The record gives the reactivity of an RNA of 207 nucleotides to DMS and 2A3. The RNA was probed in 150 mM KOAc, 10 mM MgCl2 and 150 mM bicine (pH 8.5) at 24 C. The 2A3 profile rests on 1,353 reads. It was measured as part of the RMDB library M2RFPK.
RNA sequence: GGGAACGACUCGAGUAGAGUCGAAAAUGUGUCCUAGGGAAUUGGAAGGUCAUCCUUCACAGGAUCGUGUGGAAGUCCUGCUCGGGGCGGAAGCAUUAAAUCCAUUCGAGCUAGUCAAUGCGUGGCGUUACCUCCAGGUUCUUCGGAACCUGGAGAAUCUAUUUCCACUGUUCGCAGUGGAAAUAGAAAAAGAAACAACAACAACAAC
Reactivity to DMS in 0.01 (KOAc 150mM, MgCl2 10mM, bicine 150mM(pH8.5), 24C), signal-to-noise 1, nucleotides 027 to 156: u000g010u020g050u000c010c020u000a100g030g050g030a150a160u000u010g020g010a080a010g030g010u000c110a110u000c020c060u000u000c030a070c070a140g000g000a030u000c090g030u000g010u000g000g000a230a140g010u010c040c010u010g000c100u000c130g000g050g030g020c030g050g000a270a160g020c060a070u000u000a040a070a090u000c020c010a170u000u000c040g000a090g000c040u000a130g000u010c030a040a130u000g020c080g000u000g010g040c040g010u000u000a140c160c000u000c000c000a000g000g020u000u010c000u010u010c300g050g020a010a000c000c000u010g000g010a000g020a000a020
Reactivity to 2A3 in 0.01 (KOAc 150mM, MgCl2 10mM, bicine 150mM(pH8.5), 24C), signal-to-noise 2, nucleotides 027 to 156: u170g040u010g000u010c010c060u030a060g050g010g080a060a130u150u120g040g010a020a060g040g070u220c100a120u150c030c000u110u080c070a080c030a110g020g000a030u020c020g010u000g020u020g020g030a040a000g020u020c000c040u050g040c110u080c130g020g010g000g000c020g000g000a000a010g000c000a010u070u110a090a060a050u000c000c010a010u040u070c060g020a020g030c050u060a040g050u050c040a030a110u130g060c050g060u030g020g010c020g060u080u070a080c000c000u000c000c000a000g000g010u010u000c000u010u040c200g090g000a030a000c000c000u000g000g000a000g000a000a010